Notes
This 177-nucleotide RNA was probed chemically with 2A3 and DMS. The 2A3 profile rests on 667 reads. Source: RMDB library RFM100, as collected in RNAgym. Conditions: 150 mM KOAc, 10 mM MgCl2 and 150 mM bicine (pH 8.5), 24 C. 2A3 adducts were read by reverse transcription with SuperScript II with manganese.
RNA sequence: GGGAACGACUCGAGUAGAGUCGAAAAAAGGGUUCCAUGGUAACAGCAGUUGGACAUGGGUUAGUCGGUCCUAAGAGAUAGGGAACCUCCGUUUUAAAGAAGGCUCUUGUUAGUCUGACCUAUCGAAGUCGAAAAAAGCAUUCGUGCUUUUUUCGACAAAAGAAACAACAACAACAAC
Reactivity to 2A3 in 0.01 (KOAc 150mM, MgCl2 10mM, bicine 150mM(pH8.5), 24C), signal-to-noise 1, nucleotides 027 to 126: a000a010g140g000g000u180u000c000c000a080u020g000g060u080a090a020c020a020g300c000a000g060u150u100g080g030a030c000a030u010g000g020g000u000u040a040g030u100c030g020g010u000c000c000u030a110a000g050a020g000a120u010a000g000g020g010a040a060c000c000u070c000c070g000u000u000u000u210a080a050a000g040a000a000g010g020c000u010c000u060u090g020u200u030a020g000u000c030u010g020a000c000c000u000a030u020c030g050a120a000
Reactivity to DMS in 0.01 (KOAc 150mM, MgCl2 10mM, bicine 150mM(pH8.5), 24C), signal-to-noise 2, nucleotides 027 to 126: a090a080g000g000g000u020u040c000c000a130u000g000g000u000a040a070c080a100g000c120a100g020u000u010g000g050a230c060a070u000g000g030g000u040u040a040g000u000c000g010g000u000c000c030u000a120a100g020a300g010a040u020a000g010g020g010a020a060c020c050u030c120c080g000u010u020u010u000a010a060a170g000a070a010g000g000c010u000c050u020u000g000u000u000a030g020u010c000u000g000a200c000c000u000a020u010c030g000a150a120